Chemical mapping of a 170-nucleotide RNA with DMS and 2A3. For 2A3, 26,079 sequencing reads were counted. For DMS, 36,894 sequencing reads were counted. Source: RMDB library 15KLIB, as collected in RNAgym. For 2A3 the reverse transcriptase was SuperScript II with manganese. Conditions: 150 mM KOAc, 10 mM MgCl2 and 150 mM bicine (pH 8.5), 24 C.
RNA sequence: GGGAACGACUCGAGUAGAGUCGAAAAGAGACUUCCGGGUAACCAAGUCAAGGAGAAGGAACGGUAGAAAAGAGCGAGCCUCUCGAUACGAAAGGGCCGCGAGCCUAUCGAGUUUGGAGUCAUCCGGCACGUCCCAGUUUCGACUGGGACAAAAGAAACAACAACAACAAC
Reactivity to DMS in 0.01 (KOAc 150mM, MgCl2 10mM, bicine 150mM(pH8.5), 24C), signal-to-noise 8, nucleotides 027 to 129: g020a060g000a070c050u000u000c050c040g010g010g010u000a130a080c070c060a050a060g000u050c070a090a080g020g000a050g060a050a070g000g000a040a110c090g000g000u050a020g020a070a070a090a080g010a060g030c090g000a020g000c080c020u020c050u000c040g020a100u070a070c160g000a060a080a080g020g000g030c000c030g000c160g020a090g000c070c030u020a030u000c030g030a090g000u050u040u050g010g020a060g030u040c040a050u040c000c000g010g050c140a080c110
Reactivity to 2A3 in 0.01 (KOAc 150mM, MgCl2 10mM, bicine 150mM(pH8.5), 24C), signal-to-noise 9, nucleotides 027 to 129: g080a000g010a020c010u100u010c050c010g000g020g000u070a070a050c040c030a060a020g060u090c030a020a050g090g020a060g040a070a040g040g020a060a040c080g040g020u110a020g070a050a120a050a010g060a010g010c050g010a010g010c000c000u050c000u000c050g050a070u080a220c090g090a110a050a040g030g010g000c010c000g060c050g040a050g000c010c010u040a060u030c020g030a020g030u050u080u140g030g000a020g020u020c020a040u020c030c000g030g000c040a030c070